The record gives the reactivity of an RNA of 177 nucleotides to DMS and 2A3. The reactions ran in a buffer of 150 mM KOAc, 10 mM MgCl2 and 150 mM bicine (pH 8.5), at 24 C. For 2A3 the reverse transcriptase was SuperScript II with manganese. Source: RMDB library M2PK50, as collected in RNAgym.
RNA sequence: GGGAACGACUCGAGUAGAGUCGAAAAGGUCGGUGUUUCGACACCGACCACUUACCGAGAAUGUUCCUCGGUAUAUAAAACAAACCCUUGCAAACAAGGGAAUACGAAUCGUGUUCGCACGAUUCAACGUUUAUGUUCACUUCGGUGAACAUAAACGAAAAGAAACAACAACAACAAC
Reactivity to DMS in 0.01 (KOAc 150mM, MgCl2 10mM, bicine 150mM(pH8.5), 24C), signal-to-noise 2, nucleotides 027 to 126: g000g030u000c000g020g010u000g000u000u000u000c210g030a070c010a000c010c000g010a000c010c000a000c050u010u000a000c000c000g020a000g000a100a170u030g000u000u000c090c000u010c030g000g000u000a010u000a070u000a030a040a100a050c170a070a070a160c000c000c000u000u010g000c300a130a130a220c020a010a000g000g000g010a110a030u010a030c140g000a000a030u000c000g010u000g000u000u020c240g000c010a010c000g010a000u000u000c000a080a160
Reactivity to 2A3 in 0.01 (KOAc 150mM, MgCl2 10mM, bicine 150mM(pH8.5), 24C), signal-to-noise 3, nucleotides 027 to 126: g000g000u000c010g000g000u000g010u010u080u100c140g030a020c020a000c010c010g000a000c000c000a010c000u020u020a000c000c000g000a000g000a090a180u210g020u100u110c010c000u000c010g050g030u010a020u000a010u030a110a100a020a030c080a040a080a100c000c000c000u020u040g070c190a210a220a200c010a040a040g020g000g050a030a000u090a040c070g020a000a000u000c020g000u010g030u050u050c200g030c060a000c000g000a000u010u000c000a010a000